[RMDB]
RNA sequence: GGGAACGACUCGAGUAGAGUCGAAAAAGUAGCUGGAUCCACGGCCUAGCGCGUGUGGAUCUGCGCGCAGGCGCGUACUAUAUCUGACAGCGAUCUCAGGCCCUAUCGGCCCAGGCCGACGUAGUACCUACGUCCAUACGUUCGCGUAUGGACGUAGAAAAGAAACAACAACAACAAC
Reactivity to DMS in 0.01 (KOAc 150mM, MgCl2 10mM, bicine 150mM(pH8.5), 24C), signal-to-noise 4, nucleotides 027 to 126: a070g010u000a110g040c030u010g000g000a070u000c090c050a050c020g030g000c010c010u000a130g020c090g020c010g020u010g050u010g020g010a090u000c070u000g020c040g000c010g030c100a060g000g000c010g000c040g010u000a060c090u000a060u000a120u010c070u000g000a270c060a060g010c000g000a110u010c030u000c080a100g020g010c010c020c050u010a130u000c060g010g000c020c020c140a100g000g000c020c030g040a030c200g010u000a030g010u000a120c140
Reactivity to 2A3 in 0.01 (KOAc 150mM, MgCl2 10mM, bicine 150mM(pH8.5), 24C), signal-to-noise 2, nucleotides 027 to 126: a000g110u110a050g030c020u040g010g020a050u020c060c020a000c000g000g030c000c010u090a120g010c020g000c040g070u090g030u080g150g090a170u030c040u060g000c020g000c000g010c020a030g090g000c240g010c000g220u020a020c030u100a010u040a090u180c080u090g070a060c020a020g010c020g020a160u070c030u000c030a020g070g010c000c000c000u040a140u050c030g000g000c010c030c020a100g060g010c010c010g000a020c010g030u040a030g030u040a060c010